Chemical mapping of a 177-nucleotide RNA with DMS and 2A3.
The data come from the RNA Mapping Database (RMDB), library OK1LIB.
RNA sequence: GGGAACGACUCGAGUAGAGUCGAAAAUGUAGACGGUAUGUCGUCAACAGCGGCGGGCGAUUUGACUCAACCAAAACCUCUGCAACCUCGGCAGGAGCUGCGACGAGAGGUUCUUUGGCCGCAGUAGUGCGCUGAGAAUGUUCGCAUUCUCAGCGCAAAAAGAAACAACAACAACAAC
Reactivity to DMS in 0.01 (KOAc 150mM, MgCl2 10mM, bicine 150mM(pH8.5), 24C), signal-to-noise 1, nucleotides 027 to 126: u070g090u000a060g000a000c150g000g020u020a040u050g100u000c010g000u040c000a040a000c140a140g020c000g020g020c000g040g000g000c120g010a060u000u020u000g000a050c300u080c020a190a140c180c080a170a000a050a080c020c000u000c000u010g000c070a040a000c060c000u000c140g000g040c110a070g000g020a100g010c010u010g030c050g030a020c240g000a050g000a090g000g000u000u010c040u000u000u000g030g000c000c010g070c010a120g060u000a060g000
Reactivity to 2A3 in 0.01 (KOAc 150mM, MgCl2 10mM, bicine 150mM(pH8.5), 24C), signal-to-noise 1, nucleotides 027 to 126: u080g000u160a000g030a140c090g000g000u020a090u230g030u000c000g000u000c000a010a010c000a090g000c020g050g000c010g070g010g030c030g000a050u040u020u200g010a100c070u140c210a040a000c040c030a090a160a000a050c000c000u020c000u040g000c020a050a040c000c000u050c000g020g000c010a000g000g220a050g070c050u090g000c000g070a140c000g000a090g000a050g050g050u020u010c000u030u030u170g110g000c030c050g010c000a010g000u100a020g000